Source: RMDB library OK3TST, as collected in RNAgym. This 207-nucleotide RNA was probed chemically with 2A3.
RNA sequence: GGGAACGACUCGAGUAGAGUCGAAAAUUGUGCGGCCUGCAGAGAUGUGGCUGUUCUGUUGCCUGUCUUAAUCCCCAGGGACUGUGGGGCCAGGUCCACACUGUGGGAUGAGUGCAGCCCCCACGGCUGUGGUGGGGCUGGGUCCACGCUGUGGGAACGUAAAUCAUCGUUUCGACGAUGAUUUACGAAAAGAAACAACAACAACAAC
Reactivity to 2A3 in 0.01 (KOAc 150mM, MgCl2 10mM, bicine 150mM(pH8.5), 24C), signal-to-noise 1, nucleotides 027 to 156: u130u110g020u010g000c040g050g000c000c000u080g050c080a090g010a010g030a060u170g050u090g000g000c030u060g030u090u040c090u050g060u030u090g000c030c010u050g030u060c000u050u160a130a120u050c030c010c000c090a070g050g000g130a150c110u220g000u000g020g000g050g060c000c000a010g100g280u010c010c010a010c010a000c000u000g000u000g020g010g000a130u100g010a070g000u160g000c080a070g000c000c000c000c000c000a000c010g070g050c140u100g030u070g150g000u000g030g020g020g010c000u020g000g000g140u000c000c000a000c030g030c020u060g000u190g000g020g000a070a050
The RNA was probed in 150 mM KOAc, 10 mM MgCl2 and 150 mM bicine (pH 8.5) at 24 C. Reactivities are rounded to 0.1 and cut off at 0 and 3. 2A3 adducts were read by reverse transcription with SuperScript II with manganese.